The record gives the reactivity of an RNA of 177 nucleotides to DMS and 2A3. 2A3 adducts were read by reverse transcription with SuperScript II with manganese.

[RMDB]
RNA sequence: GGGAACGACUCGAGUAGAGUCGAAAAGAUAUGGACCAGCUAACUCAACAGCGUCCUGUCGGAAACGACAGAGACGACAUGAGUACGCUGGUCCUAAGUCAAAACGCUGCUACUUCGGUAGCAGCGAUCAUUCACUUUCGUUCGCGAAAGUGAAUGAAAAAGAAACAACAACAACAAC
Reactivity to DMS in 0.01 (KOAc 150mM, MgCl2 10mM, bicine 150mM(pH8.5), 24C), signal-to-noise 3, nucleotides 027 to 126: g010a020u010a230u000g000g010a010c000c000a020g000c000u020a300a050c000u010c010a110a070c260a210g010c010g010u000c000c000u000g000u000c010g020g000a010a010a040c000g010a020c000a000g000a210g010a000c000g020a030c090a250u010g020a000g000u000a110c280g000c010u000g000g000u000c000c000u000a010a040g010u000c010a110a070a170a160c040g010c000u000g010c000u000a000c000u000u010c270g010g000u000a000g000c000a010g000c000g000a020
Reactivity to 2A3 in 0.01 (KOAc 150mM, MgCl2 10mM, bicine 150mM(pH8.5), 24C), signal-to-noise 3, nucleotides 027 to 126: g020a010u030a010u060g010g000a000c010c020a000g020c020u050a150a120c010u010c120a230a130c080a300g030c010g000u010c000c040u000g010u020c000g020g000a010a030a000c000g020a000c020a000g170a000g000a180c000g050a010c030a260u300g000a000g000u010a000c080g010c010u000g000g000u010c000c000u000a000a000g000u000c000a000a000a030a090c040g000c020u000g000c000u010a000c000u060u080c300g120g000u000a000g000c010a000g000c000g010a010
The RNA was probed in 150 mM KOAc, 10 mM MgCl2 and 150 mM bicine (pH 8.5) at 24 C. For DMS the reverse transcriptase was MarathonRT. For DMS, 3,104 sequencing reads were counted. Source: RMDB library TTRDES, as collected in RNAgym.